An RNA of 177 nucleotides, treated with 2A3 and DMS and read out base by base.
[RMDB]
RNA sequence: GGGAACGACUCGAGUAGAGUCGAAAAGAUAUGGACGCAAUGCAGCGUACCCGACGAUCUCGGAAACGAGAUUAGGGUACGACCCUGCCACUUGCGUCCUAAGUCAAAACCUAUGUUCGCAUAGGAACAAAUCGAUUUGGUUCGCCAAAUCGAUUUGAAAAGAAACAACAACAACAAC
Reactivity to 2A3 in 0.01 (KOAc 150mM, MgCl2 10mM, bicine 150mM(pH8.5), 24C), signal-to-noise 2, nucleotides 027 to 126: g040a020u090a070u130g020g010a000c000g030c010a000a030u300g000c020a010g020c010g010u000a000c000c020c000g010a050c230g050a010u010c010u000c010g040g030a140a080a060c010g010a000g010a010u000u030a050g000g000g010u010a000c000g000a010c090c010c000u020g030c020c010a130c060u000u000g000c010g000u000c010c000u000a010a020g000u020c020a050a010a000a070c000c000u020a000u010g030u020u060c300g000c150a020u020a030g000g040a020a060
Reactivity to DMS in 0.01 (KOAc 150mM, MgCl2 10mM, bicine 150mM(pH8.5), 24C), signal-to-noise 3, nucleotides 027 to 126: g010a030u000a300u010g000g010a020c000g010c010a120a000u000g000c010a010g010c000g020u010a010c010c000c000g000a110c300g000a000u000c000u000c000g000g010a160a100a220c020g000a000g020a020u000u010a190g000g010g000u000a000c020g000a100c250c300c030u000g000c010c010a020c070u000u000g000c000g010u000c000c000u000a000a030g010u000c040a090a070a070a090c000c000u000a020u000g000u010u010c160g000c010a010u000a030g010g000a070a180
Overview: The DMS profile rests on 2,492 reads. For 2A3, 5,130 sequencing reads were counted. For DMS the reverse transcriptase was MarathonRT.